The record gives the reactivity of an RNA of 177 nucleotides to DMS.
[RMDB]
RNA sequence: GGGAACGACUCGAGUAGAGUCGAAAAGGGUUCGCGGCAUGGUUGCACAACCGGUGCUAAAAACGCUCGGAGCGCCAGUUGCCACAACAGAUGUGGUGGCAGAUGAAGUCGGCCGACCAUCAACGUCAGCGUCGACAAAUUUCGAUUUGUCGACGCUAAAAGAAACAACAACAACAAC
Reactivity to DMS in 0.01 (KOAc 150mM, MgCl2 10mM, bicine 150mM(pH8.5), 24C), signal-to-noise 1, nucleotides 027 to 126: g000g010g000u000u000c200g000c150g000g000c040a080u010g010g000u000u000g020c210a190c170a040a060c040c020g010g000u000g030c030u000a010a070a050a100a150c080g040c070u000c060g000g010a130g010c020g020c050c000a030g000u000u040g010c000c010a060c020a000a020c010a170g020a080u000g010u000g000g060u000g000g030c000a010g000a040u010g030a100a090g010u000c020g030g060c000c010g010a090c030c010a040u000c190a050a080c220g030u010c200
For DMS, 701 sequencing reads were counted.